[RMDB]
RNA sequence: GGGAACGACUCGAGUAGAGUCGAAAAGCCGCAGCUUCUAUCAUAGCGAAGGAAUAUCGUGACGAGUUGAUGCGGAAGCUUCAUGUAGAGUACCCCGAGUACGGUUUUGAUAAGCAUAAGGGGUAUGAGCUAUAGUCCUAUUCGUAGGACUAUAGCUAAAAGAAACAACAACAACAAC
Reactivity to DMS in 0.01 (KOAc 150mM, MgCl2 10mM, bicine 150mM(pH8.5), 24C), signal-to-noise 9, nucleotides 027 to 126: g000c000c000g010c020a010g010c010u000u020c000u020a160u020c040a080u010a300g000c010g010a020a060g000g080a170a140u040a030u000c000g010u010g000a140c300g000a050g000u010u010g000a020u010g000c010g010g000a070a060g000c080u020u020c070a090u020g020u020a080g010a220g010u000a010c010c000c000c000g000a210g010u020a060c170g000g010u010u010u030u030g010a150u050a070a090g010c020a060u010a060a290g000g000g010g010u000a010u010g000
Reactivity to 2A3 in 0.01 (KOAc 150mM, MgCl2 10mM, bicine 150mM(pH8.5), 24C), signal-to-noise 7, nucleotides 027 to 126: g030c000c000g000c010a010g010c010u020u000c020u070a200u070c030a110u150a070g000c000g020a030a010g130g170a130a100u300a070u150c010g000u030g040a090c080g000a030g030u010u020g020a020u000g000c000g010g030a050a040g040c020u140u140c080a140u180g110u230a050g020a040g100u000a000c000c000c000c010g010a020g070u090a080c100g030g100u040u040u070u170g250a210u190a170a020g040c020a020u040a100a050g000g000g000g000u000a010u010g010

Chemical mapping of a 177-nucleotide RNA with DMS and 2A3. The 2A3 profile rests on 11,495 reads. It was measured as part of the RMDB library OK1LIB. DMS (dimethyl sulfate) methylates the pairing face of unpaired adenines and cytosines. For DMS, 25,996 sequencing reads were counted.